[RMDB]
An RNA of 177 nucleotides, treated with 2A3 and DMS and read out base by base. For DMS, 7,391 sequencing reads were counted. The 2A3 profile rests on 14,462 reads. Source: RMDB library TTRDES, as collected in RNAgym.
RNA sequence: GGGAACGACUCGAGUAGAGUCGAAAAGAUAUGGAGCGUGGUAGGGAGAGCCUAUUCGGAAACGAAUAUGCUCGAAGAACUACCCGCUCCUAAGUCAAAGAUUUCAAUGCUUCGGCAUUGAAAUCAACACUAGGUGAAAGUUCGCUUUCACCUAGUGAAAAGAAACAACAACAACAAC
Reactivity to 2A3 in 0.01 (KOAc 150mM, MgCl2 10mM, bicine 150mM(pH8.5), 24C), signal-to-noise 4, nucleotides 027 to 126: g000a000u010a010u050g010g010a010g000c050g050u300g080g000u010a010g030g080g080a300g000a000g060c000c000u000a010u000u000c000g000g000a030a000a000c000g000a000a000u010a010u020g000c010u020c010g060a270a080g030a040a000c000u010a000c000c010c000g000c000u000c000c000u000a000a000g000u000c010a140a100a080g010a000u000u010u010c000a000a010u000g000c010u060u110c300g110g000c010a000u000u000g000a000a000a000u000c000a000a010
Reactivity to DMS in 0.01 (KOAc 150mM, MgCl2 10mM, bicine 150mM(pH8.5), 24C), signal-to-noise 4, nucleotides 027 to 126: g000a030u000a040u010g000g000a020g000c000g010u010g020g010u000a000g000g000g010a090g010a010g010c000c070u000a000u000u000c000g000g000a020a020a020c000g010a010a010u000a010u000g000c000u010c010g000a090a100g000a160a300c000u000a000c000c000c000g000c000u000c010c000u000a000a050g000u000c000a120a170a150g010a010u000u000u000c000a020a010u000g000c000u000u020c300g030g010c000a010u000u000g000a010a000a000u000c000a100a180